RNA sequence: GGGAACGACUCGAGUAGAGUCGAAAAGAUAUGGACUGAGAACUACAUAUGCGUAAGCCGACGAAGUAGUACUCCUUCGGAAACGAAGGAGUACUACAGAGGCUUACCAUAUGCUCAGUCCUAAGUCCUAACACCUGAUGUUCGCAUCAGGUGUUAGAAAAGAAACAACAACAACAAC
Reactivity to DMS in 0.01 (KOAc 150mM, MgCl2 10mM, bicine 150mM(pH8.5), 24C), signal-to-noise 3, nucleotides 027 to 126: g000a080u000a160u000g000g000a020c000u000g010a010g000a130a020c070u030a300c000a020u000a000u000g000c270g020u000a000a010g000c000c000g010a240c300g010a120a150g000u000a010g010u000a000c000u000c000c010u000u000c000g000g000a100a060a180c000g030a020a030g000g000a020g010u000a000c000u000a000c000a020g020a090g010g010c000u000u000a000c000c000a000u000a000u000g000c010u000c020a010g010u000c000c000u000a000a070g010u000c010